[RMDB]
RNA sequence: GGGAACGACUCGAGUAGAGUCGAAAAUUCUAUUUCUAAUGAUUUCCAGGCGGCGAAAAGUUAUUGGUCAAGAUUAGAUGGAAAGUGAAUUGGAUCCCGCCUUGCAUCAACUGAAUCGAAGACCGGGAUCGUUUAGAUACUUCGGUAUCUAAACGAUAAAAGAAACAACAACAACAAC
Reactivity to DMS in 0.01 (KOAc 150mM, MgCl2 10mM, bicine 150mM(pH8.5), 24C), signal-to-noise 6, nucleotides 027 to 126: u000u020c020u020a120u020u000u010c030u010a070a120u010g010a120u010u010u000c030c040a080g000g010c040g010g010c110g000a060a060a050a130g010u000u000a080u030u010g010g010u010c050a040a230g000a040u000u010a050g010a070u000g000g000a030a040a050g020u010g010a030a050u000u000g000g010a100u010c050c020c010g010c130c050u010u000g000c170a030u010c020a050a090c170u020g000a030a040u000c030g000a100a080g010a050c040c020g000g010g010
Reactivity to 2A3 in 0.01 (KOAc 150mM, MgCl2 10mM, bicine 150mM(pH8.5), 24C), signal-to-noise 5, nucleotides 027 to 126: u030u010c010u040a100u040u090u020c030u050a120a050u120g070a080u010u110u000c010c020a030g010g010c010g030g000c070g090a090a040a050a010g110u080u080a130u190u130g030g010u020c030a040a040g020a110u060u100a040g050a090u070g050g070a120a070a020g130u160g040a040a090u060u040g080g050a030u040c000c000c000g010c000c010u000u030g040c000a020u020c010a040a110c050u110g030a030a030u020c050g010a080a020g010a020c010c000g010g040g000